An RNA of 177 nucleotides, treated with 2A3 and DMS and read out base by base. The 2A3 profile rests on 3,148 reads. The data come from the RNA Mapping Database (RMDB), library OK1LIB. Values are in units of 0.01, from 0 to 300, in steps of 10.
RNA sequence: GGGAACGACUCGAGUAGAGUCGAAAACUAUUUAUAGACAGAACAGUGGAAAACGUAUAUCGCUAUAAACCUUACACUCCGAAUCUUCCAGUCGUACGAUUCCACAUAGGCGAGGCAUAAGCGAAAGCAUGGAUCACCAUUUCGAUGGUGAUCCAUGAAAAGAAACAACAACAACAAC
Reactivity to 2A3 in 0.01 (KOAc 150mM, MgCl2 10mM, bicine 150mM(pH8.5), 24C), signal-to-noise 4, nucleotides 027 to 126: c010u010a070u020u170u060a150u020a000g060a060c040a020g100a220a030c020a020g050u020g030g020a080a120a000a000c020g000u000a070u000a040u090c020g000c030u010a010u110a110a120a090c000c000u070u080a060c070a020c030u080c060c000g060a040a030u020c030u050u090c050c030a070g050u040c020g020u050a050c120g010a010u020u000c000c000a030c020a060u100a030g060g000c070g010a000g000g000c050a030u070a130a060g000c080g060a070a000a000g080
Reactivity to DMS in 0.01 (KOAc 150mM, MgCl2 10mM, bicine 150mM(pH8.5), 24C), signal-to-noise 2, nucleotides 027 to 126: c040u010a080u020u020u000a030u000a030g010a030c040a100g000a070a060c090a130g030u010g000g020a070a040a050a040c070g010u040a010u010a080u020c000g050c030u020a040u010a050a010a090c110c010u000u040a060c120a050c060u050c050c030g000a020a040u000c040u010u020c000c010a030g010u010c040g000u040a060c020g020a100u000u000c020c050a000c130a080u030a060g010g000c040g000a020g000g000c050a040u020a030a030g010c010g010a050a090a080g000